[RMDB]
RNA sequence: GGGAACGACUCGAGUAGAGUCGAAAAUAGCUCAUCCAGCAGUGGAGCUGUACCUUAGGAGCACUAGAUGCACAACUGGAGCUGCAGUUGAGCUCGGCAGCAAACUUAAAUCGUCCCAGACUCCACGGGCGAUUACCAUCUUCGGAUGGUAAUCGCCAAAAGAAACAACAACAACAAC
Reactivity to 2A3 in 0.01 (KOAc 150mM, MgCl2 10mM, bicine 150mM(pH8.5), 24C), signal-to-noise 2, nucleotides 027 to 126: u160a000g030c010u010c000a100u040c010c060a000g000c000a000g020u020g010g040a000g030c010u020g060u150a100c000c000u020u130a090g050g000a040g080c040a000c040u020a000g020a170u290g150c010a030c000a120a020c000u060g030g070a050g000c080u080g020c060a070g000u010u080g000a020g010c000u000c000g070g000c010a000g070c000a130a070a000c010u010u190a030a040a100u060c090g020u020c010c010c000a080g050a140c010u000c030c030a030c000g000

Source: RMDB library OK1LIB, as collected in RNAgym. This 177-nucleotide RNA was probed chemically with 2A3. For 2A3, 650 sequencing reads were counted. For 2A3 the reverse transcriptase was SuperScript II with manganese.